[RMDB]
This 207-nucleotide RNA was probed chemically with 2A3. Source: RMDB library M2RFPK, as collected in RNAgym.
RNA sequence: GGGAACGACUCGAGUAGAGUCGAAAAAGAUCCACGCUACGGCGAGGAUCACACGUUCAUCCCUAUUGGGACGGAAGUAGGCAUAGUGCCGAAGGAACGCAUUAGUCAUGCGCUACGGCGCAUGACACACAUCAGAGUCACUUCGGUGACUCUGAAAGCGAGUAUUAGACUUCGGUCUAAUACUCGCAAAAGAAACAACAACAACAAC
Reactivity to 2A3 in 0.01 (KOAc 150mM, MgCl2 10mM, bicine 150mM(pH8.5), 24C), signal-to-noise 2, nucleotides 027 to 156: a000g000a000u000c000c010a020c030g000c020u030a050c240g110g020c000g010a030g000g000a000u000c010a000c020a010c010g000u000u000c000a000u030c000c000c020u140a300u160u300g020g000g010a000c020g000g010a010a030g010u000a020g010g010c030a060u120a300g200u180g240c010c000g010a000a000g040g010a010a000c000g020c010a070u100u080a070g010u000c000a000u000g000c010g000c000u030a040c260g060g000c020g000c000a000u000g030a000c000a010c000a000c000a090u010c000a000g000a000g000u000c000a010c020u060u110c210g110g000u000g000a000c000u000c000u000g000a000a000a000

The 2A3 profile rests on 1,333 reads. Conditions: 150 mM KOAc, 10 mM MgCl2 and 150 mM bicine (pH 8.5), 24 C. 2A3 adducts were read by reverse transcription with SuperScript II with manganese.